[RMDB]
RNA sequence: GGGAACGACUCGAGUAGAGUCGAAAAGUCGCCGCGUCUACAUCAACGCCCAGCGCGGGCGAGGGAGGCGUCCUACGGGGGUGACCCAUUCGCCGGCAUGGUAGAGGACUGCAAGAUUGCCACGACGACCCUAGUAGCCUUUCGAGGCUACUAGGGUAAAAGAAACAACAACAACAAC
Reactivity to 2A3 in 0.01 (KOAc 150mM, MgCl2 10mM, bicine 150mM(pH8.5), 24C), signal-to-noise 1, nucleotides 027 to 126: g040u020c020g040c030c080g000c000g050u000c050u060a120c030a090u060c040a140a020c060g000c000c030c020a080g040c280g020c170g180g000g000c000g010a020g040g000g030a160g050g060c050g020u060c020c020u020a200c160g250g000g000g000g020u080g100a230c020c000c020a020u020u020c030g030c000c000g060g000c050a060u100g000g000u170a120g010a050g000g040a030c060u060g000c020a000a090g000a100u040u290g020c000c000a040c050g050a020c020g050
Reactivity to DMS in 0.01 (KOAc 150mM, MgCl2 10mM, bicine 150mM(pH8.5), 24C), signal-to-noise 1, nucleotides 027 to 126: g000u000c030g010c020c280g020c050g000u010c050u050a080c120a160u000c070a090a150c070g000c070c000c060a140g010c140g060c010g000g000g020c000g010a050g020g010g030a110g010g000c000g030u010c010c030u030a080c220g040g020g020g020g000u000g010a180c030c020c050a130u000u000c030g010c030c010g000g030c080a000u020g000g000u010a110g030a100g000g000a050c190u020g000c020a050a060g010a070u000u000g020c030c050a040c060g030a090c140g000
Overview
An RNA of 177 nucleotides, treated with 2A3 and DMS and read out base by base. The RNA was probed in 150 mM KOAc, 10 mM MgCl2 and 150 mM bicine (pH 8.5) at 24 C. For 2A3 the reverse transcriptase was SuperScript II with manganese. For 2A3, 693 sequencing reads were counted. For DMS, 771 sequencing reads were counted.